[RMDB]
RNA sequence: GGGAACGACUCGAGUAGAGUCGAAAAAUGGAUCGCAUCGGCGCCCGAAAGCUUGGCAACGCGGAUGAUUUCGUCAAUGGAAAGAUAGCUUUCAAUGGGGCCAAGAUCGCGAUCCAGAUGCGGUCCAUCGCGGUAAUUUAUUCGUAAAUUACCGCGAAAAAGAAACAACAACAACAAC
Reactivity to DMS in 0.01 (KOAc 150mM, MgCl2 10mM, bicine 150mM(pH8.5), 24C), signal-to-noise 2, nucleotides 027 to 126: a140u000g010g000a000u010c000g000c000a000u000c020g000g040c140g000c030c080c060g000a020a040a060g030c030u010u000g020g030c280a040a010c150g030c300g000g030a070u000g000a190u000u000u000c090g020u000c050a050a100u000g000g000a070a030a050g000a220u000a060g000c030u000u000u010c010a120a070u020g030g000g010g000c000c030a090a030g000a060u000c120g050c090g000a050u000c020c030a040g000a080u030g000c070g000g000u000c010c020a080
Reactivity to 2A3 in 0.01 (KOAc 150mM, MgCl2 10mM, bicine 150mM(pH8.5), 24C), signal-to-noise 2, nucleotides 027 to 126: a020u040g000g000a000u000c000g020c000a000u020c000g030g010c090g170c070c010c000g030a040a050a010g080c010u040u020g000g040c020a030a060c030g030c020g070g000a030u130g040a050u130u120u100c010g030u010c050a070a120u070g050g030a120a030a000g050a100u120a060g060c030u000u000u020c000a060a100u180g020g040g010g000c040c000a020a030g000a020u020c040g000c000g000a010u000c000c010a000g000a010u030g030c070g010g020u000c000c000a010